This 207-nucleotide RNA was probed chemically with DMS and 2A3.
High DMS reactivity at an A or C suggests that its Watson-Crick edge is free.
RNA sequence: GGGAACGACUCGAGUAGAGUCGAAAAGGGUAAAAUAGUGCAUGUUUUGCCAACAUGCGCCUUGUGUUCGUUGACGACAACGUGAACUUUCCUUCCGAAAUUUCUCAAGAGUUGGACAGACGACUCGGUCAAAAACGCGUCCAGAACAAUCACAGUGAGCUAUGUAUGUCUUCGGACAUACAUAGCUAAAAGAAACAACAACAACAAC
Reactivity to DMS in 0.01 (KOAc 150mM, MgCl2 10mM, bicine 150mM(pH8.5), 24C), signal-to-noise 1, nucleotides 027 to 156: g020g030g020u000a120a120a130a110u000a020g030u010g000c030a000u000g010u010u000u010u010g000c220c010a120a000c020a020u000g010c000g020c000c000u010u000g020u000g040u000u000c130g040u000u020g000a020c040g040a170c000a080a030c080g020u020g000a100a050c080u000u020u000c020c030u000u020c110c000g000a050a160a050u000u000u020c040u010c030a090a150g010a160g010u000u000g000g020a080c130a300g030a200c030g010a080c050u000c020g000g080u010c080a010a000a030a030a090c070g000c030g040u000c010c070a100g000a080a000c100a050a110u000c110a050c040a100g030u000g000
Reactivity to 2A3 in 0.01 (KOAc 150mM, MgCl2 10mM, bicine 150mM(pH8.5), 24C), signal-to-noise 2, nucleotides 027 to 156: g010g000g090u110a010a040a160a110u160a080g000u000g050c000a010u000g020u000u090u130u130g070c030c000a000a000c000a000u000g000c000g040c000c030u080u080g080u030g000u100u060c070g050u020u040g020a120c100g020a050c050a040a020c050g050u040g000a010a020c000u010u020u000c000c000u020u080c050c010g010a040a040a040u090u120u000c070u040c040a040a030g030a000g030u010u050g020g000a060c090a050g050a130c030g030a020c030u010c120g040g000u060c040a050a080a020a070a020c050g010c030g050u000c000c000a020g030a120a140c100a050a020u210c160a000c000a080g200u210g180
The DMS profile rests on 1,524 reads. For DMS the reverse transcriptase was MarathonRT. For 2A3, 880 sequencing reads were counted.